[RMDB]
RNA sequence: GGGAACGACUCGAGUAGAGUCGAAAAGAUAUGGACUCGGGUACAGAGCGUGCGGUCGGAAACGACCGGCACGCGACGAAGUACCGCGAGUCCUAAGUCAAAAGCACGGCUCUUCGGAGCCGUGCAACAUAUUCGGGUAGUUCGCUACCCGAAUAUGAAAAGAAACAACAACAACAAC
Reactivity to 2A3 in 0.01 (KOAc 150mM, MgCl2 10mM, bicine 150mM(pH8.5), 24C), signal-to-noise 1, nucleotides 027 to 126: g000a010u020a050u070g010g000a000c000u000c010g040g030g000u030a010c050a060g300a060g140c030g020u000g030c000g030g000u030c020g030g000a050a030a020c010g030a010c000c030g020g080c010a000c000g040c000g000a000c030g040a150a050g000u000a000c010c000g160c020g100a050g010u020c000c000u000a000a000g020u000c020a000a030a200a000g000c010a000c000g010g050c010u050c030u130u180c300g030g000a030g000c030c040g030u000g010c000a020a000
Reactivity to DMS in 0.01 (KOAc 150mM, MgCl2 10mM, bicine 150mM(pH8.5), 24C), signal-to-noise 2, nucleotides 027 to 126: g020a030u000a170u000g000g010a010c010u000c000g020g010g020u010a010c000a100g020a110g020c010g040u000g010c000g000g000u010c010g020g000a040a040a120c000g010a010c000c000g020g040c000a000c000g020c000g000a050c220g010a130a110g000u000a010c020c000g010c020g010a020g010u000c000c000u000a000a050g000u000c000a130a080a190a130g010c010a020c000g000g000c010u000c010u000u020c210g020g010a000g020c010c010g000u000g020c010a010a060